[RMDB]
RNA sequence: GGGAACGACUCGAGUAGAGUCGAAAAUGUUGAUUAUAAUAACUGGCUAUGUUAUUGCUUAACCUUUCUGAACCUCAAUAUCCUUAUAUACCAAAUGCAGAAAGCAGUAGGUAUUGUCUGUUUGGCUUCUAAGUAACAGGCAAAACAAAGUGCAUAACCAUCACCCCUCAUUCGUGAGGGGUGAUGGAAAAGAAACAACAACAACAAC
Reactivity to 2A3 in 0.01 (KOAc 150mM, MgCl2 10mM, bicine 150mM(pH8.5), 24C), signal-to-noise 1, nucleotides 027 to 156: u130g010u030u020g000a130u040u180a060u110a270a120u070a030a070c030u050g030g010c000u030a070u150g100u000u010a070u050u160g070c000u060u010a060a080c000c020u020u020u010c040u160g110a060a060c010c010u070c020a080a000u020a060u180c000c140u300u150a110u010a000u000a180c000c000a300a130a000u030g000c000a000g100a250a260a000g000c000a010g000u150a000g000g020u000a000u000u020g000u000c020u000g120u000u150u150g070g010c060u070u010c040u300a180a130g010u020a030a060c050a040g050g000c060a010a010a010a010c040a040a090a000g020u040g110c120a110u020a020a010